The data come from the RNA Mapping Database (RMDB), library OK1LIB. Chemical mapping of a 177-nucleotide RNA with DMS and 2A3. 2A3 adducts were read by reverse transcription with SuperScript II with manganese.
RNA sequence: GGGAACGACUCGAGUAGAGUCGAAAAGUACUGCAGCGUUUGCUUUGGAUGGGAUCACGUGCUUCGAAGGCUGUAGUCGAUGAACCUUACUUUGACCGCACGGCUGUGGACCGUCUGUGCAAGGAGGAAUAUACUGGCUGUUCGCAGCCAGUAUAUUAAAAGAAACAACAACAACAAC
Reactivity to DMS in 0.01 (KOAc 150mM, MgCl2 10mM, bicine 150mM(pH8.5), 24C), signal-to-noise 6, nucleotides 027 to 126: g000u030a030c020u000g000c020a040g000c030g020u010u010u010g000c190u010u000u020g010g010a060u000g000g000g000a200u040c130a100c050g030u010g000c040u010u000c030g000a060a080g000g000c010u010g020u000a020g010u000c040g000a110u030g000a080a140c050c010u000u020a120c020u010u010u010g000a080c070c100g020c180a030c030g010g010c050u020g000u010g000g000a150c020c040g000u000c030u010g010u020g010c030a020a040g010g000a070g010g010
Reactivity to 2A3 in 0.01 (KOAc 150mM, MgCl2 10mM, bicine 150mM(pH8.5), 24C), signal-to-noise 9, nucleotides 027 to 126: g080u080a010c020u020g030c010a020g010c040g110u040u120u110g100c090u110u070u110g130g030a090u060g020g040g100a080u130c050a050c130g080u110g050c010u050u050c030g030a030a020g070g000c010u020g020u030a020g010u010c020g030a030u140g050a030a050c000c000u030u070a090c040u060u160u100g060a080c030c010g020c050a010c010g030g000c040u120g040u170g160g090a110c000c020g020u010c040u060g060u070g040c020a030a040g030g020a020g010g070